[RMDB]
RNA sequence: GGGAACGACUCGAGUAGAGUCGAAAAGAUGGAAAUCUCGAGGUCGACACCGUCAGCGACCGACCGAAGCGCGUCGCGAAGUGGGGACUCGAGAAGUAACGGAGUCGAGGACGGUCGGUCUCGUCUGCGUACGACGGUGAUUCGUCACCGUCGUACGAAAAGAAACAACAACAACAAC
Reactivity to DMS in 0.01 (KOAc 150mM, MgCl2 10mM, bicine 150mM(pH8.5), 24C), signal-to-noise 2, nucleotides 027 to 126: g000a010u010g010g010a100a180a090u000c000u000c000g010a030g020g000u000c000g020a140c080a100c040c000g020u010c040a150g000c000g010a000c000c030g000a080c010c030g000a110a150g000c070g010c110g000u000c020g030c040g010a100a040g010u010g030g010g000g010a290c100u000c010g000a030g020a020a060g010u020a080a300c040g020g010a130g020u000c000g000a040g000g000a050c010g000g000u020c020g000g000u000c000u000c010g000u010c030u010g010
Reactivity to 2A3 in 0.01 (KOAc 150mM, MgCl2 10mM, bicine 150mM(pH8.5), 24C), signal-to-noise 1, nucleotides 027 to 126: g050a000u100g030g130a060a070a140u020c020u000c030g010a000g030g070u000c010g010a040c010a050c100c010g060u040c000a010g040c000g000a010c040c000g080a120c020c040g040a080a030g110c060g000c080g130u020c020g020c020g020a060a000g030u080g040g030g000g000a020c000u000c020g000a010g000a020a000g000u020a020a000c050g020g020a010g020u010c020g000a020g040g030a000c000g010g010u010c010g000g000u000c000u000c020g030u010c020u060g050